RNA sequence: GGGAACGACUCGAGUAGAGUCGAAAAAGCGAGCCUGAGAUAGUGAGAGUCAGGUGAUUGAGAGAUAAGUGUGGCGCUUUCUGUAGUAUUUUCAAAAACAAUGAAGUAAUAAAUUAGGGUGGAACCGUGAAUAAUUUCUAUUCGUAGAAAUUAUUCAAAAAGAAACAACAACAACAAC
Reactivity to 2A3 in 0.01 (KOAc 150mM, MgCl2 10mM, bicine 150mM(pH8.5), 24C), signal-to-noise 6, nucleotides 027 to 126: a000g020c010g020a010g000c000c010u040g010a010g000a030u080a030g040u020g020a030g020a020g080u010c020a020g030g000u020g030a090u040u140g020a030g010a010g010a030u050a180a100g030u050g020u050g090g000c030g000c020u060u090u050c040u050g080u050a060g010u010a160u040u100u030u060c070a060a070a060a030a050c030a050a070u120g010a050a010g050u110a010a100u080a110a080a050u100u110a050g020g010g010u050g040g010a070a010c010c020g010
Reactivity to DMS in 0.01 (KOAc 150mM, MgCl2 10mM, bicine 150mM(pH8.5), 24C), signal-to-noise 7, nucleotides 027 to 126: a030g000c030g000a060g010c010c000u000g000a040g010a030u010a050g010u010g000a060g010a040g010u010c020a020g000g020u010g010a110u010u010g010a100g010a100g000a080u020a080a080g010u010g010u000g010g010c050g000c030u000u010u000c030u000g010u010a080g010u000a050u010u020u010u010c060a050a050a060a100a080c150a100a080u020g000a040a050g000u010a040a060u020a050a040a110u010u010a060g010g010g010u000g000g010a060a090c090c060g010